[RMDB]
The data come from the RNA Mapping Database (RMDB), library OK2TST. The record gives the reactivity of an RNA of 177 nucleotides to 2A3.
RNA sequence: GGGAACGACUCGAGUAGAGUCGAAAAACUUCAUCGUAAAUCAUUUUUUCAGAAAUCAUAUGAUUUGGAUUUUGCAUCACAUAACCUACGAAUUCAGAUCGUUCGCUAAUUGACAAUUGAUUAAAUCGAUCAGAUACGGGUUCGCCCGUAUCUGAUCAAAAGAAACAACAACAACAAC
Reactivity to 2A3 in 0.01 (KOAc 150mM, MgCl2 10mM, bicine 150mM(pH8.5), 24C), signal-to-noise 1, nucleotides 027 to 126: a070c040u170u150c010a140u040c020g150u050a020a020a010u000c010a000u020u020u020u010u180u060c110a080g090a090a140a080u050c040a030u020a050u130g020a040u020u020u030g020g020a010u000u010u130u110g000c010a050u100c000a040c010a100u200a130a050c030c030u030a010c080g010a040a030u030u000c000a000g030a010u000c010g000u040u000c090g000c180u120a120a030u110u000g000a000c000a010a130u000u140g010a010u150u250a080a030a170u120c060
The RNA was probed in 150 mM KOAc, 10 mM MgCl2 and 150 mM bicine (pH 8.5) at 24 C. Reactivities are given for positions 27 through 126. For 2A3, 621 sequencing reads were counted.